The record gives the reactivity of an RNA of 177 nucleotides to 2A3 and DMS. The data come from the RNA Mapping Database (RMDB), libraries RFM100 and RFMREP. DMS adducts were read by reverse transcription with MarathonRT.
RNA sequence: GGGAACGACUCGAGUAGAGUCGAAAAUUGGAGGGCAAGUUUGGUGCCAGCAGCCGCGGUAAUACCGACUCCAAGAGUGUGUAUGAGAGAUGCUGCAGUUAAAAAGUCCGUAGUCAUAGAAGGGCAACUUUAUCCAUUUCUUCGGAAAUGGAUAAAGAAAAGAAACAACAACAACAAC
Reactivity to 2A3 in 0.01 (KOAc 150mM, MgCl2 10mM, bicine 150mM(pH8.5), 24C), signal-to-noise 6, nucleotides 027 to 126: u070u040g030g010a070g010g000g030c060a090a060g070u060u120u130g060g020u060g030c010c020a010g000c020a020g010c010c040g000c020g020g000u040a020a030u050a150c020c030g040a070c020u000c030c050a040a030g040a030g030u080g000u060g000u030a080u140g080a100g000a000g000a060u040g000c010u010g000c020a030g010u090u110a040a150a040a030a010g020u000c000c010g040u070a020g040u070c050a050u060a110g070a060a100g050g010g000c010a010a000
Reactivity to DMS in 0.01 (KOAc 150mM, MgCl2 10mM, bicine 150mM(pH8.5), 24C), signal-to-noise 8, nucleotides 027 to 126: u020u020g010g000a050g000g010g030c040a050a090g010u010u010u020g000g020u000g010c060c030a110g020c020a050g000c020c110g010c040g000g020u010a080a070u010a300c040c040g010a090c030u000c010c130a080a110g010a050g010u000g000u010g000u010a040u000g000a120g010a130g000a110u010g010c010u000g010c020a100g010u020u020a030a050a090a080a090g010u000c020c020g010u010a070g020u010c100a080u010a100g020a080a110g000g000g030c080a080a140